[RMDB]
RNA sequence: GGGAACGACUCGAGUAGAGUCGAAAAGGUUCGUAUAAUCUGGUGGAUACUCUAGUAAAGUUGGGACUGACAGAUGUGUUCUAUUCAACUGGCGAUUAUAGCAAUAUGUGUAAUUCAGAUGUGAGUGUCCCUCUAGUAGUUUCGACUACUAGAGGGAAAAAGAAACAACAACAACAAC
Reactivity to 2A3 in 0.01 (KOAc 150mM, MgCl2 10mM, bicine 150mM(pH8.5), 24C), signal-to-noise 3, nucleotides 027 to 126: g010g010u050u080c040g000u130a060u080a160a070u030c010u030g020g040u040g030g040a040u050a090c010u010c010u060a090g020u110a100a090a060g040u030u040g050g000g000a050c050u040g020a020c010a040g090a080u100g080u010g010u120u060c050u050a140u020u050c010a040a050c010u000g040g000c030g040a020u080u010a030u180a090g050c060a120a070u070a120u240g080u020g020u040a070a090u050u050c010a020g040a130u050g060u050g120a030g030u040g050
Reactivity to DMS in 0.01 (KOAc 150mM, MgCl2 10mM, bicine 150mM(pH8.5), 24C), signal-to-noise 7, nucleotides 027 to 126: g020g020u000u010c130g030u010a090u010a070a070u010c020u010g000g020u000g000g010a130u010a050c030u000c020u000a120g010u000a090a070a080g010u000u000g000g010g000a160c070u000g010a070c090a070g000a060u000g010u000g010u000u000c030u000a060u010u000c070a040a070c060u000g010g010c090g000a060u000u000a070u000a080g010c040a080a090u010a060u000g010u000g000u010a030a080u010u000c050a040g010a110u000g010u000g000a060g010u000g010

The record gives the reactivity of an RNA of 177 nucleotides to 2A3 and DMS. The reactions ran in a buffer of 150 mM KOAc, 10 mM MgCl2 and 150 mM bicine (pH 8.5), at 24 C. The DMS profile rests on 10,687 reads. The 2A3 profile rests on 2,373 reads. 2A3 adducts were read by reverse transcription with SuperScript II with manganese.